[RMDB]
RNA sequence: GGGAACGACUCGAGUAGAGUCGAAAAGAUAUGGAAUGGUAGGGACAUGCUACUCGGAAACGAGUUAGCAACAGCCCUCACCAUUCCUAAGUCAAAACGUUGGAUAGUGUUCGCACUAUCCAACGAAGCUUCCUAUACAGUUCGCUGUAUAGGAAGCAAAAGAAACAACAACAACAAC
Reactivity to DMS in 0.01 (KOAc 150mM, MgCl2 10mM, bicine 150mM(pH8.5), 24C), signal-to-noise 5, nucleotides 027 to 126: g010a050u000a300u010g010g000a010a020u000g010g020u000a020g000g000g000a070c090a180u000g000c000u000a020c010u000c000g000g000a110a080a130c000g000a020g000u000u000a010g020c000a020a050c270a140g000c010c000c000u000c180a000c000c010a000u000u010c000c000u000a010a060g010u000c030a090a070a100a140c010g010u010u000g000g010a020u000a000g020u000g000u000u010c200g010c000a010c000u000a000u000c000c000a000a000c000g000a040a080
Reactivity to 2A3 in 0.01 (KOAc 150mM, MgCl2 10mM, bicine 150mM(pH8.5), 24C), signal-to-noise 4, nucleotides 027 to 126: g010a000u040a020u100g010g000a000a000u010g010g010u010a010g030g000g030a080c060a090u040g000c000u000a000c000u010c000g000g010a040a030a010c000g000a010g030u180u120a000g020c000a010a010c050a040g130c000c000c000u000c000a010c000c000a000u000u000c000c000u000a000a000g030u000c020a020a000a100a140c010g010u000u000g000g000a000u000a000g000u010g020u090u060c300g020c110a010c010u000a010u000c010c000a000a000c000g000a010a000